An RNA of 207 nucleotides, treated with DMS and 2A3 and read out base by base.
It was measured as part of the RMDB library OK3TST.
The DMS profile rests on 3,331 reads.
2A3 adducts were read by reverse transcription with SuperScript II with manganese.
[RMDB]
RNA sequence: GGGAACGACUCGAGUAGAGUCGAAAACUAGUUUGAAUAUCCCCGUUCGUGUGAUCGAGGCAACUGGAAACUUCAAGAACGUUCAUGGCGUUCCGGAUGAGGCUAUUGAGCGGAUGCGUGCACGUUGGGAAGAAAUCUAAAAACUGAGAGGAUGAGACAACACCCAACUAUUCGUAGUUGGGUGUUGAAAAGAAACAACAACAACAAC
Reactivity to DMS in 0.01 (KOAc 150mM, MgCl2 10mM, bicine 150mM(pH8.5), 24C), signal-to-noise 1, nucleotides 027 to 156: c030u000a080g000u000u000u010g010a140a130u000a120u000c020c020c020c070g000u000u000c050g050u020g000u010g010a090u000c070g000a110g000g000c020a070a140c070u000g010g000a070a060a080c040u000u010c090a100a070g010a030a030c010g030u000u010c120a160u020g020g020c010g010u000u000c000c030g020g000a090u010g010a110g010g010c020u020a080u010u000g000a080g000c060g000g020a070u010g050c080g040u010g010c060a030c080g010u010u000g030g000g000a050a060g000a040a100a110u000c060u000a030a060a030a050a080c050u000g020a080g030a080g000g000a040u020g000a190g000a110
Reactivity to 2A3 in 0.01 (KOAc 150mM, MgCl2 10mM, bicine 150mM(pH8.5), 24C), signal-to-noise 1, nucleotides 027 to 156: c050u030a050g070u050u060u160g080a090a080u110a140u150c000c000c030c020g070u050u050c010g010u020g050u090g030a080u080c040g050a030g030g000c030a060a040c040u010g060g010a100a020a040c030u040u030c040a040a030g040a100a000c010g020u070u060c040a070u050g130g000c030g000u050u030c020c000g000g050a030u050g060a050g020g010c020u020a050u120u060g030a040g070c020g000g050a030u050g010c010g050u040g010c010a000c000g040u060u040g020g020g000a040a000g030a000a040a010u080c090u100a000a000a000a000a270c050u030g050a010g020a020g030g010a020u060g000a000g000a020